[RMDB]
RNA sequence: GGGAACGACUCGAGUAGAGUCGAAAAGUACAUCAUGUAUCGUGGGAGUCUAACACACCACAUUCUAUCCGCAUAGUCAAUUCCACAAAGUACAGCUUCUUUGAAUAAAGGAGUGUAUUGGAAUAUAAAUUUAAGAAGAAGCUGAUUUGACUUGUCAGGCUACACCAAUUUUCGAAUUGGUGUAGCCAAAAGAAACAACAACAACAAC
Reactivity to 2A3 in 0.01 (KOAc 150mM, MgCl2 10mM, bicine 150mM(pH8.5), 24C), signal-to-noise 1, nucleotides 027 to 156: g030u020a020c000a040u160c010a020u140g120u080a000u150c070g020u010g000g010g040a190g070u000c080u270a300a100c020a020c020a030c070c020a050c020a020u040u020c020u120a180u000c080c060g050c070a090u030a020g020u010c000a010a140u050u170c010c010a070c030a080a060a030g050u070a090c030a110g000c010u000u030c000u010u010u010g110a060a130u210a170a060a100g050g050a040g030u040g080u060a080u020u190g000g000a020a020u020a000u020a180a060a060u130u150u050a100a050g010a050a000g030a020a000g000c050u020g040a060u000u050u090g010a020c000u100u030g060u060c090a060